RNA sequence: GGGAACGACUCGAGUAGAGUCGAAAAUCAUCCGGACGGUGCCGGACUUCGAGCGCAUCACGAUCGAAUGGGUGGUGCAGCCGCCGGGGUAGUAACGCACUCCCUUGAGCAGGUCGCCGUCGGUGACCCUUGCAUCUUGGUUCGCCAAGAUGCAAGGAAAAGAAACAACAACAACAAC
Reactivity to 2A3 in 0.01 (KOAc 150mM, MgCl2 10mM, bicine 150mM(pH8.5), 24C), signal-to-noise 6, nucleotides 027 to 126: u040c000a010u050c020c020g140g050a000c000g000g020u020g000c010c020g110g110a150c030u090u070c070g080a080g000c000g000c020a010u020c010a010c030g140a180u220c120g120a270a170u240g210g000g010u010g010g000u010g010c030a040g020c030c010g030c030c020g010g000g010g030u150a020g020u020a150a090c150g010c100a010c010u010c000c000c000u020u100g040a040g010c060a040g000g060u150c080g000c020c010g010u010c000g000g010u010g000a020c000
Reactivity to DMS in 0.01 (KOAc 150mM, MgCl2 10mM, bicine 150mM(pH8.5), 24C), signal-to-noise 7, nucleotides 027 to 126: u010c030a040u010c010c030g020g030a020c020g020g020u000g010c020c020g010g020a170c080u000u010c090g000a120g000c020g020c030a030u000c040a040c020g010a140u000c150g000a130a120u010g010g010g030u000g010g010u000g020c030a090g030c030c010g020c280c070g000g020g000g020u000a040g010u000a080a150c300g010c300a070c020u000c000c010c020u000u000g010a050g010c040a170g010g000u000c070g020c000c010g010u000c020g010g020u000g000a080c140
An RNA of 177 nucleotides, treated with 2A3 and DMS and read out base by base. The DMS profile rests on 8,514 reads. For DMS the reverse transcriptase was MarathonRT. 2A3 adducts were read by reverse transcription with SuperScript II with manganese. The reactions ran in a buffer of 150 mM KOAc, 10 mM MgCl2 and 150 mM bicine (pH 8.5), at 24 C.